RNA sequence: GGGAACGACUCGAGUAGAGUCGAAAAACGAAGGGUCCUCAGCAGAGCACCGGCAGAGGCGCUAUGCAGGAACGCUAGGGAUCCUUCAGCGGAGGACUGAAGAAACUCCGGUUUCUUCUUUCACUCUGGUAUAGUAGUAGUUCGCUACUACUAUACCAAAAGAAACAACAACAACAAC
Reactivity to DMS in 0.01 (KOAc 150mM, MgCl2 10mM, bicine 150mM(pH8.5), 24C), signal-to-noise 3, nucleotides 027 to 126: a120c130g000a010a000g010g000g000u000c000c000u000c060a040g030c000a160g000a100g020c120a040c010c030g000g010c130a070g000a120g020g010c050g000c020u010a090u000g010c050a060g020g010a100a150c170g000c020u000a050g010g000g000a000u000c000c000u000u000c000a050g030c180g010g000a020g000g000a020c030u000g000a010a010g000a010a010a000c000u000c300c190g010g010u010u000u000c000u000u000c000u000u000u000c010a100c000u000c000u010
Reactivity to 2A3 in 0.01 (KOAc 150mM, MgCl2 10mM, bicine 150mM(pH8.5), 24C), signal-to-noise 2, nucleotides 027 to 126: a000c060g000a000a000g010g000g010u000c000c000u060c030a010g030c010a010g040a030g120c040a030c100c050g080g000c070a040g080a170g270g030c050g010c040u040a040u060g000c010a020g080g070a100a040c070g000c030u040a020g000g000g010a000u020c000c000u000u010c020a010g020c070g040g010a000g000g000a000c010u030g010a010a010g010a010a010a000c020u020c050c020g020g010u010u000u000c000u010u000c000u000u030u010c220a270c070u030c060u080
Structure probing data (DMS and 2A3) for a 177-nucleotide construct. 2A3 adducts were read by reverse transcription with SuperScript II with manganese.